[RMDB]
RNA sequence: GGGAACGACUCGAGUAGAGUCGAAAAUACACUUUACGUGUGCUGGUUUCAUUACUUUGUCCCAAACCAGGCACGCGUAAUUAAAGGCCAGUUUGGCCAGGUCCGCGUUAACGAUGGUCACCAAUAAGUGUAGAAAGUUCUUCGGAACUUUCUACACAAAAGAAACAACAACAACAAC
Reactivity to DMS in 0.01 (KOAc 150mM, MgCl2 10mM, bicine 150mM(pH8.5), 24C), signal-to-noise 2, nucleotides 027 to 126: u010a190c110a130c130u000u000u010a000c030g030u000g020u000g000c000u000g010g000u000u010u000c080a060u020u020a110c180u000u000u000g000u010c050c030c030a100a040a020c010c000a050g020g040c000a000c010g020c000g000u000a000a000u000u010a130a130a090g020g000c020c020a120g000u020u000u010g010g060c000c020a040g000g000u000c020c020g040c060g010u000u000a050a090c090g000a060u000g000g020u000c050a090c100c060a050a090u020a050a090
Reactivity to 2A3 in 0.01 (KOAc 150mM, MgCl2 10mM, bicine 150mM(pH8.5), 24C), signal-to-noise 2, nucleotides 027 to 126: u070a000c040a020c080u050u060u010a000c000g000u000g000u000g020c000u010g030g030u050u060u040c130a070u070u170a130c100u170u230u160g090u050c000c010c000a000a000a000c040c000a080g140g000c000a010c000g000c000g000u000a000a000u060u090a140a020a020g000g000c000c000a090g090u160u230u130g040g050c000c000a000g010g050u030c010c020g010c050g000u030u050a160a090c060g000a040u030g010g040u030c040a000c070c000a030a090u200a260a030